An RNA of 177 nucleotides, treated with DMS and 2A3 and read out base by base. The data come from the RNA Mapping Database (RMDB), library OK2TRN. High DMS reactivity at an A or C suggests that its Watson-Crick edge is free. The DMS profile rests on 7,412 reads. The RNA was probed in 150 mM KOAc, 10 mM MgCl2 and 150 mM bicine (pH 8.5) at 24 C. For DMS the reverse transcriptase was MarathonRT.
RNA sequence: GGGAACGACUCGAGUAGAGUCGAAAAGAAAGGCAGCCAGUGCAGCCCACGCAGCCAGUCGAGGCAUGCUUUUGCAUGCCGCCCACGACUGAGGGCAGCUGCGGCACUGAGGGCAGCUGCCGAAAGAACCCUAUGCAUAGUUCGCUAUGCAUAGGGUAAAAGAAACAACAACAACAAC
Reactivity to DMS in 0.01 (KOAc 150mM, MgCl2 10mM, bicine 150mM(pH8.5), 24C), signal-to-noise 6, nucleotides 027 to 126: g010a100a150a110g010g010c000a010g020c010c020a060g000u000g010c030a080g010c040c060c080a300c030g010c030a020g000c010c010a040g000u000c030g000a210g000g020c000a000u000g000c000u000u000u010u030g010c000a010u000g000c000c020g010c120c060c120a300c030g000a040c040u000g000a140g000g010g020c140a180g000c020u000g010c020g000g000c140a030c030u010g010a060g010g010g010c140a140g000c000u000g000c000c000g000a020a070a100g000a110
Reactivity to 2A3 in 0.01 (KOAc 150mM, MgCl2 10mM, bicine 150mM(pH8.5), 24C), signal-to-noise 4, nucleotides 027 to 126: g080a030a100a010g010g000c010a000g020c020c030a020g020u020g040c020a100g120c000c030c000a010c010g000c000a010g010c030c000a000g010u020c020g050a070g000g000c000a020u000g000c020u170u270u210u300g000c000a000u000g000c000c000g000c000c010c010a120c030g050a000c020u040g020a100g060g150g030c030a020g030c000u000g000c000g030g000c020a020c050u040g020a090g030g090g000c040a020g010c000u010g000c000c000g010a010a020a000g030a030